[RMDB]
RNA sequence: GGGAACGACUCGAGUAGAGUCGAAAAGACUGUUGUUCGCAACAGUCAAAAAGCGUACUACUCGUGGUGUAGGGAGCAUGGCAUCCCAAAUAGGAUGUUAUGCGAAGAACUACACGUAACAUCGAGUAUCGCAAAAACUACCAGUUCGCUGGUAGAACAUAAUAGUGUAGUUCGCUACACUAUUAUGAAAAGAAACAACAACAACAAC
Reactivity to 2A3 in 0.01 (KOAc 150mM, MgCl2 10mM, bicine 150mM(pH8.5), 24C), signal-to-noise 9, nucleotides 027 to 156: g010a000c000u010g000u010u010g030u060u110c260g010c110a000a000c000a000g010u000c000a000a020a010a020a000g040c040g030u100a080c060u000a000c000u020c000g010u010g030g000u000g000u000a000g000g010g010a030g000c000a000u000g010g000c000a000u020c010c020c000a160a250a080u260a070g000g000a000u000g000u010u000a000u000g000c010g040a080a000g020a000a010c000u010a000c000a000c020g040u070a070a030c020a180u220c020g000a000g000u000a030u220c010g000c000a030a030a040a050a020c000u000a000c000c000a010g010u060u080c200g090c120u000g000g000u000a000g000a010a010
Reactivity to DMS in 0.01 (KOAc 150mM, MgCl2 10mM, bicine 150mM(pH8.5), 24C), signal-to-noise 6, nucleotides 027 to 156: g010a030c010u000g000u010u000g000u000u000c250g030c010a030a020c000a010g010u000c000a010a030a060a140a120g010c010g010u000a100c140u000a010c000u000c000g030u010g030g010u000g020u000a030g000g010g000a270g010c010a010u000g010g000c010a030u000c000c000c000a050a100a180u000a070g010g020a020u000g010u000u000a000u000g020c000g010a080a140g010a100a180c000u000a020c010a000c010g020u000a050a090c060a060u000c010g010a040g010u000a030u000c010g020c020a050a040a090a110a130c010u000a020c000c000a080g010u000u010c300g040c000u000g010g000u010a010g000a090a190
This 207-nucleotide RNA was probed chemically with 2A3 and DMS. For DMS, 25,135 sequencing reads were counted. The 2A3 profile rests on 24,054 reads. DMS adducts were read by reverse transcription with MarathonRT. High 2A3 reactivity points to a flexible backbone, as in loops and unpaired stretches.